[RMDB]
RNA sequence: GGGAACGACUCGAGUAGAGUCGAAAAUAGUCGUCUAGGACAUAAGCUCCGCAUCUAGACGACGUGCACUUCAUGCGGUGCUUAUGUCGAAGUGCACACGGUGGAGAUGCGAAAGCAUUUCCACCGAGCACGAUCAUGGCUUCGGCCAUGAUCGUGCAAAAGAAACAACAACAACAAC
Reactivity to 2A3 in 0.01 (KOAc 150mM, MgCl2 10mM, bicine 150mM(pH8.5), 24C), signal-to-noise 1, nucleotides 027 to 126: u170a010g040u010c060g000u020c010u030a010g090g070a060c030a190u110a060a010g000c020u000c030c000g000c000a070u000c000u010a020g060a060c020g030a030c000g010u030g080c030a030c000u020u040c030a040u060g040c000g000g030u010g000c030u150u090a110u090g060u020c000g000a040a030g020u030g000c010a080c000a000c080g000g000u010g020g000a000g000a000u000g010c000g030a080a040a000g020c000a000u010u010u000c000c000a000c000c000g000a030
Notes:
The record gives the reactivity of an RNA of 177 nucleotides to 2A3. It was measured as part of the RMDB library OK1LIB. The reactions ran in a buffer of 150 mM KOAc, 10 mM MgCl2 and 150 mM bicine (pH 8.5), at 24 C. For 2A3, 913 sequencing reads were counted. Reactivities are rounded to 0.1 and cut off at 0 and 3.